[RMDB]
RNA sequence: GGGAACGACUCGAGUAGAGUCGAAAACGAUAUGCAUUGAUCGCAUCUACUCUAUCAAUGCGUAUUAGAACGCUCGUAGAACGACGUAUUGUUAUGAGAAUGACAAUACUAGAUGCGACGAGCAUAAGGUAGUUGUAGAUUUCGAUCUGCGACUACCAAAAGAAACAACAACAACAAC
Reactivity to DMS in 0.01 (KOAc 150mM, MgCl2 10mM, bicine 150mM(pH8.5), 24C), signal-to-noise 9, nucleotides 027 to 126: c040g000a050u000a000u000g000c000a030u000u010g000a040u000c040g000c090a090u010c170u030a130c150u010c000u000a010u010c020a030a020u010g000c000g010u000a020u010u030a070g010a130a100c140g000c010u000c060g020u000a030g000a040a130c060g000a120c290g000u000a000u000u000g000u000u000a010u000g000a220g010a190a020u000g000a000c010a000a000u000a000c000u010a140g000a050u010g000c030g000a030c010g000a010g010c000a060u020a050a090
Reactivity to 2A3 in 0.01 (KOAc 150mM, MgCl2 10mM, bicine 150mM(pH8.5), 24C), signal-to-noise 9, nucleotides 027 to 126: c040g010a020u010a000u030g030c050a060u000u020g020a050u050c020g000c030a070u030c060u150a090c040u020c000u040a010u030c010a040a040u050g000c000g000u010a030u020u070a040g040a050a010c050g000c000u000c010g000u010a010g020a120a040c020g050a020c060g020u000a000u000u000g000u000u000a010u030g090a060g070a140a060u030g000a000c000a000a000u000a000c010u010a010g020a050u090g050c030g010a000c000g000a010g000c000a010u070a060a020